Source: RMDB library M2PK50, as collected in RNAgym. This 177-nucleotide RNA was probed chemically with DMS and 2A3. For DMS the reverse transcriptase was MarathonRT. 2A3 adducts were read by reverse transcription with SuperScript II with manganese. Conditions: 150 mM KOAc, 10 mM MgCl2 and 150 mM bicine (pH 8.5), 24 C. For DMS, 1,668 sequencing reads were counted. In probing experiments dimethyl sulfate is read out at A N1 and C N3, which are open when not base-paired.
RNA sequence: GGGAACGACUCGAGUAGAGUCGAAAAGGCGGGGCGUUCGCGCCCCGCCAAAGUCGGUAUGCGUAAUAAUUAAUCGUACGCAUCGAUUAUUAUCCGACAUUAAAAGCCGAUCAUUCGUGAUCGGCAAGACAUAAUCCAAUUUCGAUUGGAUUAUGUCAAAAGAAACAACAACAACAAC
Reactivity to DMS in 0.01 (KOAc 150mM, MgCl2 10mM, bicine 150mM(pH8.5), 24C), signal-to-noise 2, nucleotides 027 to 126: g010g080c050g200g100g090g190c030g170u000u000c190g030c020g140c000c040c000c000g030c010c010a010a030a040g000u000c000g020g000u000a010u000g010c010g000u000a020a040u020a080a120u040u010a100a120u020c180g000u000a020c010g000c010a020u000c030g000a050u000u000a080u010u000a080u010c000c020g030a050c060a120u010u000a040a090a120a140g010c010c000g010a030u000c000a080u000u010c190g020u000g000a000u000c010g000g000c000a000a010
Reactivity to 2A3 in 0.01 (KOAc 150mM, MgCl2 10mM, bicine 150mM(pH8.5), 24C), signal-to-noise 2, nucleotides 027 to 126: g000g020c020g070g030g000g010c060g030u080u070c140g060c000g090c060c020c000c010g050c020c000a000a000a000g000u000c000g010g010u090a010u020g000c000g020u000a010a030u080a130a110u210u180a080a080u160c130g040u020a010c010g000c010a010u010c010g030a040u050u110a070u080u020a020u200c010c000g030a020c020a020u100u230a060a110a050a020g000c000c010g000a000u000c010a040u020u110c220g080u020g000a000u000c000g000g000c000a000a000